Chemical mapping of a 177-nucleotide RNA with DMS and 2A3. The data come from the RNA Mapping Database (RMDB), library TTRDEL.

RNA sequence: GGGAACGACUCGAGUAGAGUCGAAAAGAUAUGGACAUCGAUCUUGAACUACGCUUGGUUGUCGGAAACGACAGAGAGAGCGCAAGGGAGUCCUAAGUCAAAAUCCUCCGCGUUCGCGCGGAGGAAACUAUCAUGAAGCGUUCGCGCUUCAUGAUAGAAAAGAAACAACAACAACAAC
Reactivity to DMS in 0.01 (KOAc 150mM, MgCl2 10mM, bicine 150mM(pH8.5), 24C), signal-to-noise 3, nucleotides 027 to 126: g010a040u000a210u000g000g000a010c010a240u010c150g010a080u020c010u000u000g000a100a080c130u010a290c040g020c010u010u000g010g010u000u000g000u000c000g000g000a050a060a080c000g000a010c000a020g010a080g000a140g020a010g000c020g000c000a010a000g010g000g010a030g000u000c000c000u000a010a080g000u000c030a110a070a110a100u000c010c000u000c010c000g050c000g010u010u020c240g050c000g030c000g000g010a010g000g000a010a000a050
Reactivity to 2A3 in 0.01 (KOAc 150mM, MgCl2 10mM, bicine 150mM(pH8.5), 24C), signal-to-noise 2, nucleotides 027 to 126: g010a010u030a020u120g000g000a020c020a190u270c120g080a060u060c000u020u020g020a130a100c050u130a060c300g000c040u050u030g060g220u160u060g060u000c030g020g000a010a020a030c020g010a000c000a000g030a000g020a000g000a000g000c020g020c040a000a010g000g010g010a020g000u030c000c010u000a060a000g000u020c030a020a010a050a300u040c020c010u000c010c010g040c020g000u010u040c300g000c010g000c000g110g020a000g010g000a000a020a000